An RNA of 177 nucleotides, treated with DMS and 2A3 and read out base by base.
RNA sequence: GGGAACGACUCGAGUAGAGUCGAAAAACUAAAGACCUAAUGGCAUCUGAUGCACUACAUGAUAUUAUGGCUUCGCUAAAUAUUGUUCCUGGUGAAAAAGCUAUUCGUGAAAAUAUGAAUUACGGUAAAGUUGAAACAAGUUCGCUUGUUUCAACUUAAAAGAAACAACAACAACAAC
Reactivity to DMS in 0.01 (KOAc 150mM, MgCl2 10mM, bicine 150mM(pH8.5), 24C), signal-to-noise 2, nucleotides 027 to 126: a160c040u010a090a100a100g020a090c030c020u000a060a090u000g000g000c000a090u000c090u010g010a120u010g000c070a040c080u000a060c150a050u000g010a060u000a080u010u000a060u000g010g020c020u010u010c120g010c030u000a070a070a030u000a040u010u010g000u000u000c050c020u000g000g060u000g010a060a090a050a070a080g000c040u000a060u000u000c040g010u000g010a050a030a070a080u000a060u000g000a110a100u000u000a020c090g000g000u010a080
Reactivity to 2A3 in 0.01 (KOAc 150mM, MgCl2 10mM, bicine 150mM(pH8.5), 24C), signal-to-noise 1, nucleotides 027 to 126: a000c100u150a130a090a000g070a010c000c000u030a090a020u050g070g000c020a050u000c120u150g050a100u180g000c010a000c050u050a010c030a030u090g040a020u040a060u100u070a090u160g000g000c000u090u050c060g000c030u050a060a060a070u140a060u050u130g020u030u040c010c000u050g000g000u050g020a100a060a000a020a000g000c040u030a020u030u040c020g030u050g040a140a110a020a000u200a080u070g030a070a100u110u040a030c010g000g010u020a050
2A3 adducts were read by reverse transcription with SuperScript II with manganese.
It was measured as part of the RMDB library OK2TST.